Overview: The record gives the reactivity of an RNA of 177 nucleotides to 2A3 and DMS. Source: RMDB library OK2TST, as collected in RNAgym. The DMS profile rests on 2,112 reads. Conditions: 150 mM KOAc, 10 mM MgCl2 and 150 mM bicine (pH 8.5), 24 C. 2A3 is a SHAPE reagent: it acylates the 2'-hydroxyl of flexible nucleotides of all four kinds. Reactivities are rounded to 0.1 and cut off at 0 and 3.
RNA sequence: GGGAACGACUCGAGUAGAGUCGAAAAGAUGACGCUAUCCUUGAUUGCUGCAUAUACUAUCAAGAAGAAAAACUUAUUCCUGCCGUCCUUCUUUCGGAUGACAAGAAUCUCAGUAUAAAAGCGGCCAGCUCACCUAAUAGUUCGCUAUUAGGUGAGCAAAAGAAACAACAACAACAAC
Reactivity to 2A3 in 0.01 (KOAc 150mM, MgCl2 10mM, bicine 150mM(pH8.5), 24C), signal-to-noise 3, nucleotides 027 to 126: g070a030u120g030a020c030g010c040u070a060u070c010c010u000u040g020a050u040u100g020c080u070g020c080a060u110a010u050a180c030u020a030u110c040a030a020g090a060a010g080a080a170a020a020a020c020u080u040a040u020u050c020c000u000g030c020c000g020u000c000c010u100u240c020u050u210u090c060g010g000a010u030g010a020c010a020a000g030a060a060u010c060u020c120a030g030u040a040u050a180a140a020a000g000c000g000g040c010c030a030
Reactivity to DMS in 0.01 (KOAc 150mM, MgCl2 10mM, bicine 150mM(pH8.5), 24C), signal-to-noise 3, nucleotides 027 to 126: g000a080u010g020a100c100g030c030u000a080u000c090c010u000u010g010a070u000u000g010c160u020g010c130a130u000a060u000a080c020u000a040u010c050a020a010g020a110a070g010a080a090a080a080a060c040u010u010a100u010u000c000c020u000g000c010c000g030u000c000c000u000u000c230u000u000u000c220g000g010a020u000g020a020c020a020a010g000a020a030u000c160u000c080a060g020u020a040u000a030a060a090a090g010c020g020g000c070c150a120